RNA sequence: GGGAACGACUCGAGUAGAGUCGAAAAGAAACUAAGGAACACCUCGAUCAAGGUUUUGGCCCAAGGUGAUAACCAGGUACUGAAUAUGCAUUACCAGAUCCCUUCACAUAGGACCCAAGAUGAGCUGGUCAAGUUGUGAAUUCGUUCACAACUUGACAAAAGAAACAACAACAACAAC
Reactivity to DMS in 0.01 (KOAc 150mM, MgCl2 10mM, bicine 150mM(pH8.5), 24C), signal-to-noise 3, nucleotides 027 to 126: g040a060a060a090c060u010a010a260g010g000a140a110c040a030c060c020u020c090g000a090u000c110a090a150g000g000u000u000u010u000g010g010c090c050c030a070a080g000g020u010g000a060u000a060a080c050c040a140g000g020u010a050c060u000g020a160a170u010a060u010g000c090a000u000u000a030c090c020a110g010a090u000c030c010c030u000u010c070a030c100a090u000a080g010g000a090c050c000c050a080a090g000a080u000g000a080g020c080u010g000
Reactivity to 2A3 in 0.01 (KOAc 150mM, MgCl2 10mM, bicine 150mM(pH8.5), 24C), signal-to-noise 2, nucleotides 027 to 126: g060a010a070a000c040u080a060a040g030g010a030a030c000a040c030c020u020c070g060a070u060c040a020a060g040g000u010u060u150u040g090g030c030c000c000a000a030g020g000u070g010a150u060a050a070c050c050a040g030g000u050a050c030u050g040a100a070u170a070u180g050c010a020u020u050a030c000c000a010g000a060u070c000c010c000u030u040c090a050c010a080u080a040g120g000a040c010c040c000a030a040g090a090u070g030a010g090c050u060g020